[RMDB]
RNA sequence: GGGAACGACUCGAGUAGAGUCGAAAACUGCGCUCGUUAUUAAUCGAGCGGUCAAGCGUAUGUUUGGUACCCGUACAGCAGCCAUGGCAUUAGAAGGACCUGGGAAAGAACAUAAUUGCAGGGUCCAUCACCUACUAAGGUUCGCCUUAGUAGGUGAAAAAGAAACAACAACAACAAC
Reactivity to DMS in 0.01 (KOAc 150mM, MgCl2 10mM, bicine 150mM(pH8.5), 24C), signal-to-noise 5, nucleotides 027 to 126: c020u000g010c010g010c000u000c000g010u030u030a100u030u050a150a090u040c050g000a030g030c010g020g000u040c090a060a120g000c130g010u020a040u020g010u000u000u010g000g020u030a080c070c000c030g010u010a070c070a050g000c040a070g000c030c050a090u010g010g000c010a060u020u010a070g010a140a100g010g000a060c000c020u000g000g000g010a130a080a100g010a080a120c140a080u030a070a110u020u010g010c100a300g000g000g000u000c010c010a180
Reactivity to 2A3 in 0.01 (KOAc 150mM, MgCl2 10mM, bicine 150mM(pH8.5), 24C), signal-to-noise 6, nucleotides 027 to 126: c020u040g020c000g000c010u000c010g070u110u040a140u100u230a260a070u180c010g010a000g000c010g000g000u110c060a080a030g070c030g050u080a040u180g070u030u070u040g060g030u110a080c010c000c000g000u050a030c040a050g030c010a030g000c010c010a110u130g080g000c050a060u080u140a100g130a210a050g020g020a020c010c010u040g020g060g080a070a260a090g150a140a040c050a060u180a150a180u210u200g060c080a040g040g000g000u000c000c000a010
This 177-nucleotide RNA was probed chemically with DMS and 2A3. The reactions ran in a buffer of 150 mM KOAc, 10 mM MgCl2 and 150 mM bicine (pH 8.5), at 24 C. 2A3 adducts were read by reverse transcription with SuperScript II with manganese. Reactivities are given for positions 27 through 126. For 2A3, 5,546 sequencing reads were counted. The DMS profile rests on 10,083 reads.